[RMDB]
RNA sequence: GGGAACGACUCGAGUAGAGUCGAAAAAUGCCUGCCGAGUGGGUGGGGAGGCUCCGGCCCGGUAAGAUGGGAUCCAGCAGUGCGAGACUGUGGCCCAGGUCAGAUGGUGGCAGCUCGGCCUUCCUGGCCGAAUAGGAAUAUUCGUAUUCCUAUUCGGAAAAGAAACAACAACAACAAC
Reactivity to 2A3 in 0.01 (KOAc 150mM, MgCl2 10mM, bicine 150mM(pH8.5), 24C), signal-to-noise 9, nucleotides 027 to 126: a000u060g050c010c010u020g010c020c010g030a050g050u100g010g060g040u120g020g020g010g020a030g040g000c030u020c050c050g040g000c000c000c010g020g040u090a060a020g040a070u080g000g000g030a040u080c030c020a040g050c010a010g040u050g080c050g030a040g050a070c020u020g010u050g050g000c000c010c010a020g010g060u050c040a020g020a140u100g060g070u060g080g000c020a030g010c020u020c030g030g000c000c000u030u020c010c010u030g070g020
Reactivity to DMS in 0.01 (KOAc 150mM, MgCl2 10mM, bicine 150mM(pH8.5), 24C), signal-to-noise 9, nucleotides 027 to 126: a100u000g010c040c030u000g020c020c020g010a070g030u000g010g010g030u000g000g000g000g010a090g010g010c040u000c090c060g010g000c020c010c040g010g010u010a080a110g010a140u010g000g000g000a150u010c030c030a100g020c040a040g010u000g010c180g010a130g010a090c020u000g010u000g010g000c030c010c020a080g010g010u000c070a080g010a130u010g010g010u000g010g010c060a140g000c050u000c060g010g000c020c070u000u000c020c020u000g010g010